Chemical mapping of a 177-nucleotide RNA with DMS and 2A3.
The 2A3 profile rests on 1,548 reads.
Values cover nucleotides 27 to 126.
RNA sequence: GGGAACGACUCGAGUAGAGUCGAAAAUAUGACAUAAAAUACAGCAGCGAUAGUUAGUAGUUAUGAUAGCCUUCGGGAAGCCAGAGCAAAUACUAAAGCUGCAGUGCGCAGGUCAAGUUAUCUUGGUCAAAUCAAGCGAAUUCGUUCGCUUGAUUUGAAAAGAAACAACAACAACAAC
Reactivity to DMS in 0.01 (KOAc 150mM, MgCl2 10mM, bicine 150mM(pH8.5), 24C), signal-to-noise 2, nucleotides 027 to 126: u000a160u010g000a050c000a090u040a050a080a150a090u010a050c050a100g020c010a030g020c020g020a300u000a020g000u000u000a060g000u010a120g020u020u010a060u010g010a020u010a030g000c010c000u050u020c120g000g020g000a060a040g020c150c010a010g000a050g000c030a020a150a060u000a010c000u010a050a040a300g020c000u010g020c010a030g000u000g000c160g000c300a040g000g000u040c010a000a090g010u000u000a110u000c040u000u010g010g000u020
Reactivity to 2A3 in 0.01 (KOAc 150mM, MgCl2 10mM, bicine 150mM(pH8.5), 24C), signal-to-noise 3, nucleotides 027 to 126: u150a070u070g020a000c010a010u280a100a090a090a000u160a030c030a010g000c000a000g000c000g000a020u010a010g010u030u050a000g010u030a000g010u110u000a060u100g030a080u100a110g020c020c070u100u060c130g070g000g020a040a040g080c030c000a000g000a000g000c000a000a000a080u040a060c000u000a010a040a010g000c000u000g000c010a010g000u030g000c120g020c100a050g120g000u000c010a000a100g020u020u010a240u130c030u050u020g210g070u020